[RMDB]
RNA sequence: GGGAACGACUCGAGUAGAGUCGAAAAAAAUCAAUGUUAUCAAAGUGUUUAACGUGGCUAGAAUAGUGGGUUUGCACGUAUUAAAGAAUGCGGUAGUAUGCGUAAACCGUUUUAACGAAUUAUAUAGUCUCCAGAAAUCUGUGGCGUUACAUACGUGCAGCAAUUGAUUUUUCGAAAUCAAUUGCUGAAAAGAAACAACAACAACAAC
Reactivity to DMS in 0.01 (KOAc 150mM, MgCl2 10mM, bicine 150mM(pH8.5), 24C), signal-to-noise 2, nucleotides 027 to 156: a070a050a060u000c080a110a070u010g020u000u000a110u000c060a070a050a120g000u000g010u010u000u000a040a080c070g030u000g000g010c040u050a020g010a050a090u000a080g020u000g020g020g030u000u000u000g000c020a030c020g040u000a040u010u010a050a080a110g010a080a060u010g060c040g060g030u010a070g010u000a030u000g000c030g000u000a030a090a040c020c000g020u040u000u000u000a070a120c050g020a090a050u000u000a090u010a110u000a080g000u000c020u000c050c020a120g020a070a070a060u000c060u010g040u000g040g000c030g010u000u010a060c080a120u000a050c020g020u000g000
Reactivity to 2A3 in 0.01 (KOAc 150mM, MgCl2 10mM, bicine 150mM(pH8.5), 24C), signal-to-noise 3, nucleotides 027 to 156: a000a000a000u210c070a040a030u070g010u080u090a110u150c060a020a110a100g050u030g020u060u110u060a090a030c050g030u010g050g030c020u020a030g030a110a060u060a050g090u030g020g040g000u040u070u090g030c040a010c000g000u000a040u030u100a120a080a050g110a060a040u100g010c030g040g000u020a010g050u030a040u120g060c040g000u030a090a010a060c000c020g000u000u020u070u170a050a020c000g030a050a050u190u010a050u020a010u040a150g030u000c040u030c070c020a020g100a080a080a030u020c040u020g040u030g080g020c000g000u020u000a010c010a030u080a040c030g010u030g000

Source: RMDB library OK3TST, as collected in RNAgym. The record gives the reactivity of an RNA of 207 nucleotides to DMS and 2A3. Reactivities are given for positions 27 through 156. The reactions ran in a buffer of 150 mM KOAc, 10 mM MgCl2 and 150 mM bicine (pH 8.5), at 24 C.